[RMDB]
RNA sequence: GGGAACGACUCGAGUAGAGUCGAAAACGCUGGGUAAGCAAGAUUGAACAAUAGCCGACGUGGCCACUGAAGCGCGCACGGUGGGCCAUUAAAGCACCAUACCAAAUUCAAUCUUGAUUACCUGUGCUGAAGCGCGCACGGCAACCGAAAGGUGCGAGGUGAUGGACAUGUUCGCAUGUCCAUCACCAAAAGAAACAACAACAACAAC
Reactivity to 2A3 in 0.01 (KOAc 150mM, MgCl2 10mM, bicine 150mM(pH8.5), 24C), signal-to-noise 2, nucleotides 027 to 156: c020g030c010u030g020g000g010u000a000a000g010c000a000a000g000a000u020u000g010a030a010c080a120a220u100a190g000c020c000g020a040c150g000u010g030g000c000c000a010c010u030g060a220a040g010c020g000c000g000c010a010c030g050g000u100g040g110g080c010c020a020u060u120a110a020a000g030c020a020c110c120a110u150a250c050c080a140a060a060u050u000c010a000a010u000c000u020u000g030a020u000u000a010c000c020u010g020u010g000c000u070g040a100a010g000c000g020c020g000c010a010c020g040g000c010a060a030c000c010g140a040a020a100g020g000u000g000c030g030a070